[RMDB]
RNA sequence: GGGAACGACUCGAGUAGAGUCGAAAAUAGAGCCUAAAAAUUGACCUACUCUCUUAGAAGAAGUCAAUUGGACCUGAAAUAGUGUCCUUUGUAAGCCAUUAAGUUUGGAGUAUUUGAGGUAAUGGCCCACAUACUAGAGCUUCGGCUCUAGUAUGUGAAAAGAAACAACAACAACAAC
Reactivity to 2A3 in 0.01 (KOAc 150mM, MgCl2 10mM, bicine 150mM(pH8.5), 24C), signal-to-noise 3, nucleotides 027 to 126: u120a000g070a020g010c020c000u060a080a070a060a040a010u050u050g010a030c000c000u050a070c020u070c010u000c070u200u230a060g020a070a010g010a120a010g100u020c000a010a050u030u040g000g020a020c020c010u020g070a080a100a030u120a070g140u170g050u120c000c000u030u020u050g100u060a040a010g020c040c020a040u070u070a080a080g210u040u140u180g090g030a070g040u040a120u080u080u090g090a030g020g000u040a030a070u050g010g000c000c000
Reactivity to DMS in 0.01 (KOAc 150mM, MgCl2 10mM, bicine 150mM(pH8.5), 24C), signal-to-noise 5, nucleotides 027 to 126: u010a120g010a150g020c000c010u000a030a070a090a050a030u000u000g000a020c010c020u010a260c100u010c010u010c160u010u020a080g020a080a040g010a130a220g000u010c020a010a010u000u000g000g000a050c010c010u000g000a050a050a270u000a060g000u010g010u010c010c010u000u000u010g010u000a100a120g010c040c050a050u010u000a060a110g000u010u000u010g000g010a090g010u010a050u000u010u000g000a040g010g010u000a060a070u000g000g010c010c080

Chemical mapping of a 177-nucleotide RNA with 2A3 and DMS.
Reactivities are given for positions 27 through 126.
2A3 adducts were read by reverse transcription with SuperScript II with manganese.
DMS adducts were read by reverse transcription with MarathonRT.
The reactions ran in a buffer of 150 mM KOAc, 10 mM MgCl2 and 150 mM bicine (pH 8.5), at 24 C.
For 2A3, 2,539 sequencing reads were counted.
Source: RMDB library OK2TRN, as collected in RNAgym.